[RMDB]
RNA sequence: GGGAACGACUCGAGUAGAGUCGAAAACAAGGAGGGUAGUGUGAUCAAUUUCUGUUACAUGCAUCAAAUGGAACUUGCUAAUGGUACACAUACCGGUUCAGCAUUUGAUGGUACUAUGUAUGGUGCCGAUUCGGGUGAACUUCGGUUCACCCGAAUCAAAAGAAACAACAACAACAAC
Reactivity to DMS in 0.01 (KOAc 150mM, MgCl2 10mM, bicine 150mM(pH8.5), 24C), signal-to-noise 1, nucleotides 027 to 126: c050a100a110g010g010a070g000g000g020u010a020g030u010g020u040g030a120u000c080a090a110u000u000u000c030u000g000u000u000a070c060a020u010g060c060a040u000c040a060a070a030u000g000g000a000a020c000u010u000g040c110u000a050a050u010g020g040u000a080c130a150c120a100u000a050c050c070g000g030u000u020c020a100g010c010a030u000u010u000g040a030u000g030g010u010a020c090u030a040u000g020u010a040u010g010g010u020g000c090c040
Reactivity to 2A3 in 0.01 (KOAc 150mM, MgCl2 10mM, bicine 150mM(pH8.5), 24C), signal-to-noise 1, nucleotides 027 to 126: c040a040a060g080g000a020g040g040g000u020a020g010u040g000u000g080a060u030c060a040a060u030u110u030c020u030g080u050u050a010c010a020u040g030c000a040u040c010a050a000a000u070g020g030a020a010c000u070u050g040c010u040a070a070u100g000g020u090a030c160a000c000a170u040a030c030c030g000g070u020u010c050a090g030c030a090u000u000u060g080a080u060g000g050u030a020c030u020a000u050g010u010a040u080g000g000u040g050c050c040
An RNA of 177 nucleotides, treated with DMS and 2A3 and read out base by base.
Conditions: 150 mM KOAc, 10 mM MgCl2 and 150 mM bicine (pH 8.5), 24 C.
It was measured as part of the RMDB library 15KREP.
For 2A3, 1,097 sequencing reads were counted.